[RMDB]
RNA sequence: GGGAACGACUCGAGUAGAGUCGAAAAACGGUCGUACGCGACCGAGGCGCGGCUAGGUCGACGGACCGAACAAUGGCAUCCCGCAUUCUGCCAUCCGCCGCGCAGCGUCUUCUCAAACGGUGCGGAAAAAAGUAGGACACCUUCGGGUGUCCUACAACGGUAAAUACGACUUCGGUCGUAUUUACCGAAAAGAAACAACAACAACAAC
Reactivity to 2A3 in 0.01 (KOAc 150mM, MgCl2 10mM, bicine 150mM(pH8.5), 24C), signal-to-noise 1, nucleotides 027 to 156: a010c000g000g000u000c000g020u040a030c290g030c010g140a000c040c000g000a030g000g010c010g000c000g010g000c000u000a000g010g000u010c040g090a240c180g200g000a010c000c000g000a000a010c010a010a010u000g000g000c000a030u120c050c010c000g000c000a030u300u140c020u030g000c000c000a010u010c000c010g010c000c010g000c000g010c000a000g010c020g030u020c020u040u030c010u020c030a090a080a070c060g030g010u000g010c000g000g000a050a050a020a000a000a030g010u010a000g000g000a000c000a000c010c020u030u100c220g080g000g000u000g010u020c000c000u000a000c000a000a000